[RMDB]
RNA sequence: GGGAACGACUCGAGUAGAGUCGAAAAGAUAUGGAAGCGGUACCAGGCGUUGAAAUCGGAAACGAUGGAGCCUGUACACGCUUCCUAAGUCAAAAGCCAUUGGAGAUCUUCGGAUCUCCAAUGGCAAGAUCGUAAUUAGCUUCGGCUAAUUACGAUCAAAAGAAACAACAACAACAAC
Reactivity to DMS in 0.01 (KOAc 150mM, MgCl2 10mM, bicine 150mM(pH8.5), 24C), signal-to-noise 2, nucleotides 027 to 126: g010a030u040a300u000g020g010a020a000g020c000g010g030u000a010c160c150a020g000g010c020g010u030u030g000a100a150a030u000c000g000g000a230a100a210c000g000a010u000g020g000a130g010c000c020u010g000u000a000c010a070c010g030c020u010u010c010c000u000a000a050g000u010c020a130a070a100a090g000c000c000a010u000u000g010g010a000g000a020u000c010u000u010c240g010g000a000u010c010u000c000c000a000a010u000g000g030c020a000a020